RNA sequence: GGGAACGACUCGAGUAGAGUCGAAAACGUAGGUAUUAACUCCACUAAUUUCAUAAUACGUGGUGGGUUAAAGAAAUGUAGACCAAAGAAUCGUUCUUGAUCCUUCUCGUUAAAUGCUUGAGCAAUCUGUGUCUGUAAACUUCGGUUUACAGACACAAAAAGAAACAACAACAACAAC
Reactivity to DMS in 0.01 (KOAc 150mM, MgCl2 10mM, bicine 150mM(pH8.5), 24C), signal-to-noise 1, nucleotides 027 to 126: c030g000u050a030g020g040u110a050u000u000a040a020c000u060c000c000a010c000u000a050a080u080u070u050c200a180u100a190a110u180a080c300g030u020g000g040u010g000g000g050u000u000a000a020a050g010a270a000a030u000g000u020a150g080a130c050c030a080a110a020g000a020a070u010c050g020u000u000c000u020u000g000a060u010c030c100u000u000c000u020c080g000u000u000a050a220a060u000g030c010u020u000g000a070g000c040a100a070u050c110
Reactivity to 2A3 in 0.01 (KOAc 150mM, MgCl2 10mM, bicine 150mM(pH8.5), 24C), signal-to-noise 4, nucleotides 027 to 126: c020g080u080a050g130g070u070a060u080u040a040a000c000u020c110c000a020c000u040a070a190u040u200u110c100a110u150a240a060u130a220c190g020u060g040g000u010g060g010g000u000u010a000a010a050g100a020a040a010u140g080u100a010g080a080c040c060a070a050a000g120a020a060u050c010g040u020u000c000u020u010g080a090u030c000c000u030u050c060u030c040g050u010u050a010a120a060u140g020c030u110u170g080a040g040c040a060a080u030c030
Background
Chemical mapping of a 177-nucleotide RNA with DMS and 2A3. 2A3 is a SHAPE reagent: it acylates the 2'-hydroxyl of flexible nucleotides of all four kinds. For DMS the reverse transcriptase was MarathonRT.